[RMDB]
RNA sequence: GGGAACGACUCGAGUAGAGUCGAAAAACUUGAUGACUCAAACAAUAACAGUGAACCAAUCUGUUCCUAAAAGUUUGCAUUUAAUUGGUUCAAACUAUUUGGAAAUAUAGGAAAUGAGCACUUGAUGCCGGACCUAUCGAUUCGUCGAUAGGUCCGGAAAAGAAACAACAACAACAAC
Reactivity to 2A3 in 0.01 (KOAc 150mM, MgCl2 10mM, bicine 150mM(pH8.5), 24C), signal-to-noise 1, nucleotides 027 to 126: a000c100u100u160g000a110u080g180a120c000u000c000a030a030a000c130a000a270u180a000a000c000a050g120u070g060a000a100c000c000a000a150u010c000u120g070u050u000c000c000u090a000a000a000a000g140u060u000u000g040c000a000u050u130u050a170a300u250u300g050g040u020u000c000a000a000a000c000u020a100u000u000u050g040g000a000a000a130u060a000u000a080g180g000a000a000a000u000g000a000g000c000a000c000u160u050g200a300u170g040